This 177-nucleotide RNA was probed chemically with DMS and 2A3. For DMS, 977 sequencing reads were counted. For DMS the reverse transcriptase was MarathonRT. As a SHAPE reagent, 2A3 marks flexible, mostly unpaired nucleotides at the ribose 2'-OH. Values cover nucleotides 27 to 126.
[RMDB]
RNA sequence: GGGAACGACUCGAGUAGAGUCGAAAAAAGUUGAUAAGGAUUUACUCCGAGGAGACGAACUACCACGAACAGGGGAUACUCUACCCGUGGCGUCUCCGUUUGACGAGUAAGUCCUAAGUCAACAAAAGUACUAAGCAUACUUCGGUAUGCUUAGUACAAAAGAAACAACAACAACAAC
Reactivity to DMS in 0.01 (KOAc 150mM, MgCl2 10mM, bicine 150mM(pH8.5), 24C), signal-to-noise 2, nucleotides 027 to 126: a060a070g010u010u000g020a000u000a170a040g000g000a010u000u000u000a010c010u000c000c000g000a070g040g010a010g000a010c020g010a150a070c090u010a300c000c010a000c010g010a020a190c190a030g000g000g000g000a220u010a050c020u000c030u000a150c180c090c000g010u010g000g010c010g020u010c000u000c000c000g010u000u000u070g000a130c300g000a040g000u000a020a000g000u010c010c010u020a010a030g010u000c010a000a000c010a060a040a050a050
Reactivity to 2A3 in 0.01 (KOAc 150mM, MgCl2 10mM, bicine 150mM(pH8.5), 24C), signal-to-noise 1, nucleotides 027 to 126: a000a000g020u010u020g000a000u020a020a000g000g010a010u000u020u000a000c000u000c000c010g000a040g000g010a000g000a000c000g010a070a000c040u130a020c040c010a000c010g030a090a020c050a080g010g000g010g050a060u160a260c010u020c020u090a020c020c010c000g030u000g000g010c010g000u000c010u000c000c000g000u120u060u070g010a010c000g000a010g010u010a000a010g000u000c000c000u000a010a010g000u000c000a000a000c020a000a030a000a010